[RMDB]
RNA sequence: GGGAACGACUCGAGUAGAGUCGAAAAAGGUGCGCCAGGUGCGGGCCGGGCGGGGGUCGCGCUCACCUUUCUGGCCGCUGAGUGCCGCGUACCAGGACAGCGAGAGGAAGGCGCACAGGCAGAAGAGACUAUGAAGGCCAUUCGUGGCCUUCAUAGUAAAAGAAACAACAACAACAAC
Reactivity to DMS in 0.01 (KOAc 150mM, MgCl2 10mM, bicine 150mM(pH8.5), 24C), signal-to-noise 1, nucleotides 027 to 126: a080g000g020u010g010c020g020c020c040a100g020g030u010g020c040g020g000g020c030c020g020g000g020c070g010g000g040g010g000u000c110g020c020g020c040u010c040a110c000c030u010u000u020c000u010g010g010c210c010g000c070u000g010a140g040u010g040c020c040g000c050g050u010a020c070c020a160g000g000a190c080a070g020c030g010a080g000a070g010g000a170a130g000g020c000g000c000a010c030a060g000g030c030a070g010a110a100g000a160g000

Chemical mapping of a 177-nucleotide RNA with DMS.
The reactions ran in a buffer of 150 mM KOAc, 10 mM MgCl2 and 150 mM bicine (pH 8.5), at 24 C.
Reactivities are given for positions 27 through 126.